[RMDB]
RNA sequence: GGGAACGACUCGAGUAGAGUCGAAAACGUGAAUACACGAUCGAAGGAUUGGCGACUUCGUUACCCAACGAAGGCUAUGAGUUGACAAGCGUUGGGUAAAGCCAUCGCUUCCACAAAUAGGGUGGAGGUAUGAAGAUUGUUUCGACAAUCUUCAUACAAAAGAAACAACAACAACAAC
Reactivity to DMS in 0.01 (KOAc 150mM, MgCl2 10mM, bicine 150mM(pH8.5), 24C), signal-to-noise 6, nucleotides 027 to 126: c050g020u010g000a270a110u040a090c080a020c020g000a080u000c050g010a040a030g000g010a060u030u010g000g010c000g020a100c050u000u000c040g010u010u000a050c000c010c000a030a010c010g010a090a090g010g010c020u010a060u020g010a120g030u010u010g000a110c110a090a070g000c020g000u000u000g000g010g000u000a010a040a090g000c020c020a080u020c080g010c050u010u000c010c010a010c020a080a100a070u030a120g010g020g020u000g000g000a040g010
Reactivity to 2A3 in 0.01 (KOAc 150mM, MgCl2 10mM, bicine 150mM(pH8.5), 24C), signal-to-noise 9, nucleotides 027 to 126: c010g030u020g070a190a080u280a160c040a010c040g060a110u140c040g020a040a010g050g050a130u070u140g010g010c020g010a040c010u040u020c040g040u030u020a030c000c000c000a000a010c010g060a160a090g100g000c020u060a170u210g110a100g200u220u160g060a100c020a100a020g030c020g000u010u000g010g000g000u030a050a030a020g010c000c010a050u070c030g020c010u070u000c010c010a000c010a020a190a100u250a110g200g040g000u000g000g020a060g000